[RMDB]
RNA sequence: GGGAACGACUCGAGUAGAGUCGAAAAAUUGUGUAGAAACGAGCAAUACAGGAGUGGUGCAUGGUCGUUGGAAAUUGAUGGGAUGACUUUGACCUUAAAUGGUUGAAUGAGUGAGAUCUUUUGGACACCGAUAUACAAACUUCGGUUUGUAUAUCGGAAAAGAAACAACAACAACAAC
Reactivity to 2A3 in 0.01 (KOAc 150mM, MgCl2 10mM, bicine 150mM(pH8.5), 24C), signal-to-noise 2, nucleotides 027 to 126: a020u100u070g020u000g010u050a040g070a050a090a000c040g000a020g010c020a030a000u080a120c030a070g000g070a070g060u040g000g010u060g000c020a040u080g010g010u060c020g000u020u010g060g040a050a070a040u060u090g040a070u070g050g000g090a040u030g010a010c000u040u030u050g010a010c010c000u060u020a050a160a200u150g020g000u000u000g000a050a020u040g000a000g040u040g040a100g000a090u070c000u040u060u030u070g010g000a000c010a030
Reactivity to DMS in 0.01 (KOAc 150mM, MgCl2 10mM, bicine 150mM(pH8.5), 24C), signal-to-noise 2, nucleotides 027 to 126: a040u000u010g030u000g020u010a100g000a070a030a070c100g000a070g030c050a060a070u000a070c110a060g000g000a060g030u000g000g010u000g020c050a070u000g000g030u000c030g010u000u000g020g000a050a080a090u000u000g010a080u010g020g020g010a040u000g000a120c160u000u010u000g000a030c010c010u000u000a070a070a100u000g000g010u000u000g010a020a020u010g010a150g010u000g010a110g010a070u000c010u010u010u010u000g030g000a110c190a140
An RNA of 177 nucleotides, treated with 2A3 and DMS and read out base by base. DMS adducts were read by reverse transcription with MarathonRT. For DMS, 1,981 sequencing reads were counted. High DMS reactivity at an A or C suggests that its Watson-Crick edge is free.